The data come from the RNA Mapping Database (RMDB), library TTRDEL. Structure probing data (2A3 and DMS) for a 177-nucleotide construct. DMS adducts were read by reverse transcription with MarathonRT.

[RMDB]
RNA sequence: GGGAACGACUCGAGUAGAGUCGAAAAGAUAUGGACAGUUGGGAGCUACGUUCGGAAACGAACGAAUAGCGACGAUCAAUGUCCUAAGUCAAAUCCUACCGGCAGUGUUCGCACUGCCGGUAGGAAACUGUCUAUAUCUGUUCGCAGAUAUAGACAGAAAAGAAACAACAACAACAAC
Reactivity to 2A3 in 0.01 (KOAc 150mM, MgCl2 10mM, bicine 150mM(pH8.5), 24C), signal-to-noise 2, nucleotides 027 to 126: g000a010u040a000u090g050g000a020c010a060g300u170u040g040g000g010a030g000c000u020a000c010g010u030u010c010g000g030a050a060a060c020g000a010a010c040g040a140a080u090a010g050c030g060a120c030g020a000u030c040a060a030u050g000u000c000c000u040a100a000g040u020c060a040a000a300u050c000c000u020a000c000c020g090g000c010a030g030u000g010u110u300c300g090c230a040c050u020g010c080c000g010g000u000a020g010g000a000a000a010
Reactivity to DMS in 0.01 (KOAc 150mM, MgCl2 10mM, bicine 150mM(pH8.5), 24C), signal-to-noise 2, nucleotides 027 to 126: g020a020u010a300u010g000g000a000c010a040g010u010u000g010g000g010a050g010c000u000a000c010g000u000u000c000g030g010a050a040a170c010g000a020a000c000g000a070a140u000a020g010c000g020a160c200g010a060u000c030a020a060u000g000u010c000c000u000a030a080g000u000c040a110a110a150u000c010c000u000a000c020c000g000g090c020a010g040u000g020u010u010c230g000c000a020c000u000g010c030c000g000g030u000a010g000g000a000a020a090
Annotation:
The RNA was probed in 150 mM KOAc, 10 mM MgCl2 and 150 mM bicine (pH 8.5) at 24 C. The DMS profile rests on 2,128 reads.